[RMDB]
RNA sequence: GGGAACGACUCGAGUAGAGUCGAAAAGCCACCUGCCGCGUUCUACUUCGGCGGGACGCCCAACGGCCGGAACACAGGGUACGCUAUCGCGCGAACUGAAGUAGAUGGCGUGAUGACUCACGUGCUCCACAUCUAGCGUAUUCGUACGCUAGAUGUGAAAAGAAACAACAACAACAAC
Reactivity to 2A3 in 0.01 (KOAc 150mM, MgCl2 10mM, bicine 150mM(pH8.5), 24C), signal-to-noise 7, nucleotides 027 to 126: g040c010c010a050c020c020u050g020c010c010g040c010g070u110u100c050u070a090c030u040u050c020g000g000c000g000g010g000a030c040g000c010c020c010a070a080c040g020g000c030c050g060g090a160a000c060a010c020a160g050g020g050u130a080c020g000c040u070a030u110c040g010c010g010c010g090a150a030c040u150g040a130a020g040u100a020g020a080u130g060g000c020g010u010g030a080u090g070a040c040u000c060a050c040g010u030g020c010u030c020
Reactivity to DMS in 0.01 (KOAc 150mM, MgCl2 10mM, bicine 150mM(pH8.5), 24C), signal-to-noise 8, nucleotides 027 to 126: g000c050c080a160c020c010u000g010c010c020g020c300g000u000u010c050u000a040c060u000u000c020g020g010c010g000g010g010a060c110g000c020c050c050a090a110c210g020g000c010c060g000g000a060a040c100a080c110a110g010g010g000u000a030c030g010c040u000a040u000c090g000c040g020c020g010a080a090c100u000g000a050a040g020u000a040g020a090u010g000g000c000g020u010g000a060u010g000a110c120u000c050a100c090g010u000g010c050u010c030